[RMDB]
RNA sequence: GGGAACGACUCGAGUAGAGUCGAAAAAGCAUAUAAAAUUGAACAUUUAAAUAAAUCUUAUGCCGAUAAGACUAUAUUCGAUAACCUAGAUUUAUCAAUUUCAGAAGGUGAAAAAAUAGGUUUGGUGCCCUACAAAAUAAUUCGUUAUUUUGUAGGGAAAAGAAACAACAACAACAAC
Reactivity to 2A3 in 0.01 (KOAc 150mM, MgCl2 10mM, bicine 150mM(pH8.5), 24C), signal-to-noise 5, nucleotides 027 to 126: a000g000c000a010u070a010u050a040a140a080a070u140u130g080a110a020c020a040u130u250u250a140a210a130u200a030a090a030u040c030u020u000a000u010g000c000c020g040a050u020a090a010g000a000c000u020a010u000a020u090u030c000g020a020u020a100a020c000c000u020a020g020a090u010u080u060a080u060c030a070a060u030u170u080c070a100g160a270a090g160g000u110g070a010a050a000a010a030a020u040a030g010g060u040u010u090g110g030u050g020
Reactivity to DMS in 0.01 (KOAc 150mM, MgCl2 10mM, bicine 150mM(pH8.5), 24C), signal-to-noise 2, nucleotides 027 to 126: a040g000c010a010u010a010u000a050a060a080a040u010u030g010a200a240c070a070u020u030u030a070a100a120u020a060a030a060u050c020u000u000a010u000g000c000c000g010a200u000a040a180g000a010c020u000a040u000a020u000u000c010g020a010u000a050a000c000c010u000a030g020a120u010u000u030a100u000c020a030a040u010u020u020c230a060g000a100a030g000g020u000g000a000a020a030a080a080a060u000a000g000g000u010u010u000g000g030u000g010